[RMDB]
RNA sequence: GGGAACGACUCGAGUAGAGUCGAAAAGAUAUGGAUUAUUGAGCAGCUCACCGAUGAAAUCGGAAACGAUGGAGGUGAGAACUACUGUGUAAGUAAUCCUAAGUCAAAACAGGUCUUCGGACCUGAACAACGCACUUUAGUUCGCUAAAGUGCGUUGAAAAGAAACAACAACAACAAC
Reactivity to 2A3 in 0.01 (KOAc 150mM, MgCl2 10mM, bicine 150mM(pH8.5), 24C), signal-to-noise 1, nucleotides 027 to 126: g040a030u100a050u150g000g000a000u000u040a030u040u100g070a110g000c000a000g060c000u000c000a000c000c030g240a300u040g000a130a000a000u010c000g000g040a060a020a010c000g000a010u010g040g030a030g000g020u000g000a010g010a000a000c010u070a030c000u010g010u020g070u230a000a000g020u010a000a000u000c000c000u030a120a030g060u020c040a030a010a060a120c010a000g000g000u020c010u060u060c250g110g010a010c000c000u000g000a010a020
Reactivity to DMS in 0.01 (KOAc 150mM, MgCl2 10mM, bicine 150mM(pH8.5), 24C), signal-to-noise 2, nucleotides 027 to 126: g020a030u000a300u000g000g000a000u000u000a000u000u000g020a300g000c030a000g030c000u000c000a050c000c000g000a130u020g000a070a110a020u000c000g010g000a070a070a110c000g000a030u000g000g000a050g020g000u000g000a010g010a020a050c040u010a280c000u000g000u000g000u000a250a040g000u000a020a010u000c000c000u000a030a150g010u020c040a100a020a100a120c000a020g010g000u000c010u000u010c280g000g010a020c010c010u000g010a030a150